Structure probing data (DMS) for a 177-nucleotide construct. Reactivities are given for positions 27 through 126. It was measured as part of the RMDB library OK2TRN. Reactivities are rounded to 0.1 and cut off at 0 and 3. DMS adducts were read by reverse transcription with MarathonRT.
[RMDB]
RNA sequence: GGGAACGACUCGAGUAGAGUCGAAAAUUAAAGAACCGGGUGUUGUAGGAUUAUCUAUUGGUACGCGUCCUGACUGUCUACCAGACGAUGUUGUCGAAUAUUUAGCAGAUUUGAAUCAACGAACAUAUCAAGGUACUGAUUUCGAUCAGUACCUUGAAAAAGAAACAACAACAACAAC
Reactivity to DMS in 0.01 (KOAc 150mM, MgCl2 10mM, bicine 150mM(pH8.5), 24C), signal-to-noise 3, nucleotides 027 to 126: u020u020a090a110a210g020a180a170c030c020g020g000g030u000g020u010u010g010u000a060g000g000a100u010u000a070u010c070u000a100u010u010g020g010u000a030c170g020c060g000u000c030c070u010g000a080c050u010g030u000c040u000a110c100c090a100g010a080c070g020a080u000g000u000u010g000u000c040g010a040a090u000a080u000u000u000a070g020c090a140g000a080u000u000u000g010a110a080u000c070a070a080c070g010a080a120c240a090u010a100